[RMDB]
RNA sequence: GGGAACGACUCGAGUAGAGUCGAAAAGAUAUGGACGACCUUGCUCAGCCUUUGCUCGGAAACGAGCAUAGGCCCAUGGUCAGUCCUAAGUCAAAGUUCGUUCCGUAGUUCGCUACGGAACGAACAAGAAGUCUAAAGACUUCGGUCUUUAGACUUCAAAAGAAACAACAACAACAAC
Reactivity to 2A3 in 0.01 (KOAc 150mM, MgCl2 10mM, bicine 150mM(pH8.5), 24C), signal-to-noise 2, nucleotides 027 to 126: g020a030u080a040u100g010g000a010c010g000a010c010c010u040u100g060c110u150c300a010g000c000c000u010u010u010g000c000u000c010g010g030a060a060a050c010g000a000g000c000a000u000a000g000g000c010c000c010a000u020g010g000u000c080a020g010u020c000c000u010a100a020g050u030c050a130a050a080g010u000u000c000g000u000u010c000c010g000u000a000g000u020u120c300g010c220u000a000c000g000g000a000a000c000g000a000a000c010a000a010
Reactivity to DMS in 0.01 (KOAc 150mM, MgCl2 10mM, bicine 150mM(pH8.5), 24C), signal-to-noise 4, nucleotides 027 to 126: g000a060u000a300u000g000g000a040c000g010a020c010c010u000u000g010c210u010c300a140g000c000c000u000u000u000g000c000u010c000g010g000a070a070a130c010g000a000g000c000a000u000a000g020g040c000c170c010a010u000g010g000u000c010a100g010u000c000c000u010a010a110g000u000c040a120a140a150g000u000u000c000g010u000u000c000c020g020u000a010g010u000u010c240g010c010u000a010c000g000g000a000a000c000g000a000a000c010a060a080